[RMDB]
RNA sequence: GGGAACGACUCGAGUAGAGUCGAAAAGAUAUGGAUAAGUCCCCUCCGAUCUCCGAAGAACGUACGUAACAUCUUUCGGAAACGAAAGUGGUACGGGAGGAGUGAGGAGGGGACUUAUCCUAAGUCAGAAACAAGAUAUGUUCGCAUAUCUUGUUUCAAAAGAAACAACAACAACAAC
Reactivity to DMS in 0.01 (KOAc 150mM, MgCl2 10mM, bicine 150mM(pH8.5), 24C), signal-to-noise 4, nucleotides 027 to 126: g010a040u000a300u010g010g010a000u000a000a020g010u010c000c000c000c010u000c000c000g000a270u010c000u010c000c010g000a120a120g000a190a210c030g000u000a020c000g010u000a030a070c200a030u020c010u000u000u010c000g020g010a110a120a220c010g010a000a010a000g020u000g010g010u000a010c000g000g000g010a120g010g000a020g010u000g000a300g000g010a020g010g010g000g000a000c000u000u000a010u000c000c000u000a000a040g000u000c050a160

This 177-nucleotide RNA was probed chemically with DMS. The RNA was probed in 150 mM KOAc, 10 mM MgCl2 and 150 mM bicine (pH 8.5) at 24 C. The data come from the RNA Mapping Database (RMDB), library TTRINS.